[RMDB]
RNA sequence: GGGAACGACUCGAGUAGAGUCGAAAAGAUAUGGAUUGGCGAGUUUCGUUCGGAAACGAACGGGAGAACGAUGAGCCACUGUCCUAAGUCAAAGUUGUAAGAAACACUUCGGUGUUUCUUACAACAAGACACUUGUCAACUUCGGUUGACAAGUGUCAAAAGAAACAACAACAACAAC
Reactivity to 2A3 in 0.01 (KOAc 150mM, MgCl2 10mM, bicine 150mM(pH8.5), 24C), signal-to-noise 1, nucleotides 027 to 126: g030a040u090a050u240g000g000a010u060u150g010g000c040g030a080g090u010u050u140c000g040u020u000c000g000g010a070a050a040c000g000a010a020c000g030g080g010a210g060a110a030c110g110a100u190g110a000g000c000c000a050c080u110g060u000c000c020u080a190a010g020u030c080a220a060a030g000u000u000g010u010a000a000g010a000a000a020c010a030c040u090u260c300g030g000u000g000u010u000u000c000u000u000a000c000a000a000c000a000a000
Reactivity to DMS in 0.01 (KOAc 150mM, MgCl2 10mM, bicine 150mM(pH8.5), 24C), signal-to-noise 2, nucleotides 027 to 126: g010a050u030a170u010g020g010a040u000u000g000g010c010g010a220g030u010u000u010c010g000u010u010c000g030g000a090a030a130c010g030a000a000c020g000g000g000a110g000a100a030c150g000a100u010g000a300g000c010c010a070c300u000g000u010c000c010u000a090a070g000u000c040a030a060a180g000u010u000g000u000a000a020g000a010a010a010c000a000c000u000u000c210g050g000u000g010u000u010u000c000u000u010a010c000a000a000c000a040a150

An RNA of 177 nucleotides, treated with 2A3 and DMS and read out base by base. For 2A3 the reverse transcriptase was SuperScript II with manganese.